Chemical mapping of a 177-nucleotide RNA with DMS and 2A3. Conditions: 150 mM KOAc, 10 mM MgCl2 and 150 mM bicine (pH 8.5), 24 C. The data come from the RNA Mapping Database (RMDB), library TTRDES. For DMS, 3,101 sequencing reads were counted. For 2A3, 4,268 sequencing reads were counted. For DMS the reverse transcriptase was MarathonRT.
RNA sequence: GGGAACGACUCGAGUAGAGUCGAAAAGAUAUGGAAUUCUCGGGAGGACAACAGCAGAGCUCGGAAACGAGCUCUGACAUGUCCUAACGAGAGAUUCCUAAGUCAAAGCCCGAGUUCGCUCGGGCAACUAACAAUUCCUGUUCGCAGGAAUUGUUAGAAAAGAAACAACAACAACAAC
Reactivity to DMS in 0.01 (KOAc 150mM, MgCl2 10mM, bicine 150mM(pH8.5), 24C), signal-to-noise 3, nucleotides 027 to 126: g010a080u010a300u010g000g010a000a010u000u000c000u010c000g000g000g010a080g000g000a020c000a030a110c250a200g010c010a020g030a010g020c000u000c010g000g000a070a090a280c010g010a000g010c010u000c000u000g000a010c080a170u000g010u000c000c000u000a040a050c000g000a020g010a040g000a020u000u000c000c010u010a080a160g000u000c040a130a150a160g000c000c000c000g000a020g000u000u010c260g040c000u000c020g010g000g020c010a000a010
Reactivity to 2A3 in 0.01 (KOAc 150mM, MgCl2 10mM, bicine 150mM(pH8.5), 24C), signal-to-noise 2, nucleotides 027 to 126: g020a010u090a070u200g000g000a000a010u020u020c000u000c010g000g040g000a020g030g010a010c020a220a010c030a190g080c020a010g030a010g000c020u010c000g040g070a110a060a030c010g000a010g000c000u050c000u010g000a020c000a030u050g000u000c010c000u010a020a000c010g020a000g020a010g000a000u000u010c000c010u000a100a040g060u020c040a110a150a020g000c020c010c000g020a010g010u090u160c290g000c130u000c000g000g000g030c000a000a000